[RMDB]
RNA sequence: GGGAACGACUCGAGUAGAGUCGAAAAGCGGAGAGCUAUAUUAAGGCUUUAGAGGAUAAAGGAUCAAAACAUACUCUCUGGCCUGAACAUUGUAUAUUAUCUACAUGGGGUCAUGCGCUGGCUGACGCGUGACUUGAUUGUUCGCAAUCAAGUCACGAAAAGAAACAACAACAACAAC
Reactivity to DMS in 0.01 (KOAc 150mM, MgCl2 10mM, bicine 150mM(pH8.5), 24C), signal-to-noise 3, nucleotides 027 to 126: g010c020g020g010a080g000a050g010c160u000a040u000a050u010u010a140a130g000g000c010u000u000u000a020g020a080g010g010a100u000a030a080a050g010g000a110u000c080a090a050a080a050c110a070u000a070c010u000c010u000c020u010g000g010c000c010u000g000a080a100c110a020u010u000g010u000a000u010a100u000u020a060u000c090u000a020c030a040u000g010g010g010g010u000c020a040u000g010c060g010c050u000g000g000c060u000g010a100c090g010
Reactivity to 2A3 in 0.01 (KOAc 150mM, MgCl2 10mM, bicine 150mM(pH8.5), 24C), signal-to-noise 1, nucleotides 027 to 126: g020c020g030g020a060g010a010g070c090u020a060u000a000u110u100a070a040g020g000c030u040u010u080a010g020a050g160g000a060u120a120a050a090g140g000a070u140c100a010a030a020a090c020a010u070a040c000u020c000u000c020u060g080g000c010c010u000g020a040a030c030a060u100u080g010u020a060u010a020u290u130a090u080c050u020a060c010a060u080g060g000g000g000u000c050a030u080g020c040g010c040u040g060g000c020u010g000a030c020g000

Description:
Structure probing data (DMS and 2A3) for a 177-nucleotide construct. Values cover nucleotides 27 to 126. For 2A3, 1,460 sequencing reads were counted. Values are in units of 0.01, from 0 to 300, in steps of 10.